Structure probing data (DMS and 2A3) for a 177-nucleotide construct. Values cover nucleotides 27 to 126. The reactions ran in a buffer of 150 mM KOAc, 10 mM MgCl2 and 150 mM bicine (pH 8.5), at 24 C. The 2A3 profile rests on 3,439 reads.
RNA sequence: GGGAACGACUCGAGUAGAGUCGAAAAUCUGGGUCACAAAAGGGCCAGCACCUCAGAACCGACGGGAAGCGAGGAUUUGGGACAUUUCAUCAGAAAGACAGUGCCACACAGAACAUAGACACUGGGAGUUACAAGAGGCAUUCGUGCCUCUUGUAACAAAAGAAACAACAACAACAAC
Reactivity to DMS in 0.01 (KOAc 150mM, MgCl2 10mM, bicine 150mM(pH8.5), 24C), signal-to-noise 3, nucleotides 027 to 126: u010c020u010g000g010g010u000c060a040c120a070a030a050a090g000g000g000c040c010a070g000c170a150c050c010u010c090a060g010a150a150c090c060g050a110c150g010g040g010a090a060g000c080g000a070g010g010a040u020u000u000g020g000g000a070c180a070u020u010u010c000a050u000c040a030g020a100a090a070g010a080c030a040g020u000g000c000c060a080c070a080c090a070g010a040a050c090a060u020a020g010a000c090a030c040u000g020g000g010a230
Reactivity to 2A3 in 0.01 (KOAc 150mM, MgCl2 10mM, bicine 150mM(pH8.5), 24C), signal-to-noise 4, nucleotides 027 to 126: u020c020u020g030g020g020u050c030a020c030a110a120a130a070g030g010g020c000c000a000g010c050a050c000c020u070c020a050g020a080a060c010c000g050a040c050g020g000g040a060a050g040c040g030a040g040g020a030u080u050u060g030g000g000a000c070a070u040u050u000c020a100u020c030a060g100a040a080a000g050a060c030a020g040u020g050c040c000a050c000a010c010a050g050a070a010c010a020u110a050g080a010c010a000c100u030g020g000g040a090